[RMDB]
RNA sequence: GGGAACGACUCGAGUAGAGUCGAAAAAUGACAACAUUGAUGGGAAAGUUUAAACUUACUGGGCGCUCCCCUCUGUUUGUACUUCAACCAAUGUUGCACUGCAAGAAACAACAGUUCGUUGAAGAGACCUUUUAAAUGGGUUCGCCCAUUUAAAAGGAAAAGAAACAACAACAACAAC
Reactivity to 2A3 in 0.01 (KOAc 150mM, MgCl2 10mM, bicine 150mM(pH8.5), 24C), signal-to-noise 2, nucleotides 027 to 126: a010u060g040a050c000a050a000c020a030u020u030g020a040u080g030g000g060a030a070a090g000u080u110u120a110a110a020c010u020u090a060c090u070g010g000g030c080g050c020u080c020c000c010c010u000c010u020g030u000u070u040g010u000a030c000u000u000c010a060a030c000c000a020a000u030g010u000u020g000c030a020c070u120g000c070a110a090g040a130a120a020c040a010a020c000a110g080u100u110c020g000u020u040g030a070a020g020a020g040a020
Reactivity to DMS in 0.01 (KOAc 150mM, MgCl2 10mM, bicine 150mM(pH8.5), 24C), signal-to-noise 3, nucleotides 027 to 126: a070u000g000a110c040a010a040c020a040u000u000g000a090u000g020g020g010a100a020a060g000u000u000u000a050a040a060c030u000u000a050c170u010g010g000g000c100g010c210u000c060c010c000c060u000c040u000g010u000u010u000g020u010a040c000u000u000c040a120a050c010c030a040a050u000g010u000u000g010c070a090c160u000g010c150a070a100g000a100a080a080c040a020a020c020a050g020u000u000c250g010u000u000g000a030a050g000a190g000a190